This 177-nucleotide RNA was probed chemically with DMS and 2A3. Source: RMDB library 15KREP, as collected in RNAgym. For 2A3 the reverse transcriptase was SuperScript II with manganese. The DMS profile rests on 2,873 reads.
RNA sequence: GGGAACGACUCGAGUAGAGUCGAAAACCAUAGCGAUAGGGAGAGAUGCUAGGAGUUAGAGGAGACCGAAGCGAGGAGGAAAGCAAAGAAAGCAACGGGGCUAGCCGUCAGGUGUUCCACCCCCCGACUUCAAUAAUGUGUUCGCACAUUAUUGAAGAAAAGAAACAACAACAACAAC
Reactivity to DMS in 0.01 (KOAc 150mM, MgCl2 10mM, bicine 150mM(pH8.5), 24C), signal-to-noise 3, nucleotides 027 to 126: c030c010a120u000a090g010c040g000a090u000a080g000g000g010a060g010a090g000a070u010g020c080u010a080g000g000a070g020u010u010a060g020a100g010g010a080g000a060c060c040g010a100a110g010c130g010a060g010g010a060g000g020a070a050a070g020c070a050a070a090g000a060a070a080g010c080a060a050c120g000g000g000g020c080u000a070g010c020c040g010u000c120a050g010g020u000g000u000u000c000c010a180c010c000c000c000c000c010g010a120
Reactivity to 2A3 in 0.01 (KOAc 150mM, MgCl2 10mM, bicine 150mM(pH8.5), 24C), signal-to-noise 2, nucleotides 027 to 126: c000c000a030u070a020g070c040g050a050u080a060g030g050g000a060g010a020g010a020u080g000c020u020a050g000g050a050g010u080u080a030g010a020g070g020a020g010a020c000c040g030a040a020g040c040g010a040g000g000a020g000g030a100a030a000g010c040a070a030a060g070a060a080a000g010c020a020a030c010g000g000g040g040c020u040a020g020c000c000g010u030c020a020g020g010u050g040u070u000c010c010a020c020c000c000c010c000c000g020a020